[RMDB]
RNA sequence: GGGAACGACUCGAGUAGAGUCGAAAAGAAGUCGUGUCUUAGCUGAAACGAUACAACGCACGAGAUUCCAAGGUCUCUGUAGAACGACCGCUUGUGACGUCAUAGCUAUCACGUUCGACAUACGACAGGUAUGUAGUAGGUUCGCCUACUACAUACCAAAAGAAACAACAACAACAAC
Reactivity to DMS in 0.01 (KOAc 150mM, MgCl2 10mM, bicine 150mM(pH8.5), 24C), signal-to-noise 8, nucleotides 027 to 126: g000a140a050g010u010c000g010u010g000u010c060u000u000a020g010c010u000g000a070a080a040c090g000a130u010a040c100a070a040c050g010c020a040c040g010a040g000a100u000u010c170c230a120a080g010g000u000c010u010c070u020g010u020a070g010a090a110c190g000a050c070c010g000c040u010u000g000u000g000a080c010g010u010c090a170u020a040g000c000u010a030u010c130a040c050g000u010u010c030g000a030c050a050u020a030c050g000a060c130a100
Reactivity to 2A3 in 0.01 (KOAc 150mM, MgCl2 10mM, bicine 150mM(pH8.5), 24C), signal-to-noise 5, nucleotides 027 to 126: g110a080a010g020u020c010g000u010g010u020c040u030u050a020g010c020u010g040a060a040a010c040g000a010u040a060c030a030a000c020g000c000a010c020g010a000g010a060u170u020c090c040a050a030g020g000u000c010u000c020u060g140u110a070g040a090a000c040g010a000c000c020g010c010u000u010g000u000g010a090c010g000u010c020a050u080a060g000c000u000a000u030c010a010c030g010u030u030c030g000a000c000a060u120a020c020g020a010c000a010